Notes: An RNA of 177 nucleotides, treated with DMS and 2A3 and read out base by base. The 2A3 profile rests on 1,922 reads. Source: RMDB library OK2TST, as collected in RNAgym. For 2A3 the reverse transcriptase was SuperScript II with manganese. As a SHAPE reagent, 2A3 marks flexible, mostly unpaired nucleotides at the ribose 2'-OH.

[RMDB]
RNA sequence: GGGAACGACUCGAGUAGAGUCGAAAAGAGCGAAAGUCGCUGUCCGAUCUGCGGCAGUCAUUCCUGUCGGGGCGGCUAUUCCAUCAGGCGGAGUCUAUGUCCAAGCACUACAAGACGCCCAUCCUGCUGUAAAAGAACACUUCGGUGUUCUUUUACAAAAAGAAACAACAACAACAAC
Reactivity to DMS in 0.01 (KOAc 150mM, MgCl2 10mM, bicine 150mM(pH8.5), 24C), signal-to-noise 3, nucleotides 027 to 126: g000a080g030c120g000a060a100a080g030u010c040g000c000u000g000u010c030c010g000a030u000c110u010g020c120g020g020c140a060g020u010c090a090u000u000c050c010u000g020u000c030g000g000g000g010c040g000g010c030u010a080u010u010c040c050a120u000c080a070g010g000c230g000g020a110g010u010c020u020a090u000g010u010c050c070a100a110g030c090a030c070u010a050c080a110a060g000a060c050g010c010c000c020a110u010c010c020u010g020c210
Reactivity to 2A3 in 0.01 (KOAc 150mM, MgCl2 10mM, bicine 150mM(pH8.5), 24C), signal-to-noise 1, nucleotides 027 to 126: g100a000g030c010g060a130a030a000g100u050c000g000c020u030g130u040c010c010g010a120u010c050u170g030c080g070g000c030a000g030u080c020a050u120u050c020c000u010g020u060c000g000g000g000g000c000g030g070c000u090a180u030u060c030c010a030u080c040a000g040g050c040g010g000a020g040u000c010u100a180u090g020u000c010c020a090a010g060c010a030c080u090a040c040a030a000g020a000c000g040c020c000c000a030u050c000c010u050g060c040